An RNA of 177 nucleotides, treated with 2A3 and DMS and read out base by base. The data come from the RNA Mapping Database (RMDB), library OK2TST. Conditions: 150 mM KOAc, 10 mM MgCl2 and 150 mM bicine (pH 8.5), 24 C. The 2A3 profile rests on 1,395 reads. For DMS the reverse transcriptase was MarathonRT. The DMS profile rests on 878 reads.

RNA sequence: GGGAACGACUCGAGUAGAGUCGAAAAUUACUAAGCUCGUCAAUUUCUGUCUGGCUUUUCGACAACGCCGUGUUCAGUGCUCCAAAGUUUCCGUUUAGUUCACGAAUUUGAGUACUCAACGGAUUAAGGGAGGUAUACCAUUCGUGGUAUACCUCCCAAAAGAAACAACAACAACAAC
Reactivity to 2A3 in 0.01 (KOAc 150mM, MgCl2 10mM, bicine 150mM(pH8.5), 24C), signal-to-noise 2, nucleotides 027 to 126: u140u040a050c050u040a030a070g000c020u000c040g040u060c040a050a100u090u150u170c010u110g050u010c000u000g000g060c000u090u050u000u010c000g000a000c000a030a010c040g030c010c040g000u000g000u070u100c100a090g010u000g050c000u030c060c000a020a010a120g020u030u070u020c000c000g000u030u000u000a020g000u040u050c050a020c090g060a120a190u140u120u220g070a090g020u000a000c000u000c010a000a000c020g000g000a000u030u090a050a030
Reactivity to DMS in 0.01 (KOAc 150mM, MgCl2 10mM, bicine 150mM(pH8.5), 24C), signal-to-noise 1, nucleotides 027 to 126: u030u020a040c060u010a110a140g040c010u000c120g000u000c030a110a040u000u000u000c070u000g010u000c040u000g000g000c040u010u010u020u010c020g040a050c060a040a180c180g010c020c040g010u000g000u000u000c110a070g060u010g000c150u000c020c070a100a090a170g020u000u010u010c010c020g000u000u000u000a010g000u000u000c070a060c080g010a050a130u000u000u000g020a180g010u000a000c000u000c140a010a020c030g000g000a010u000u020a040a110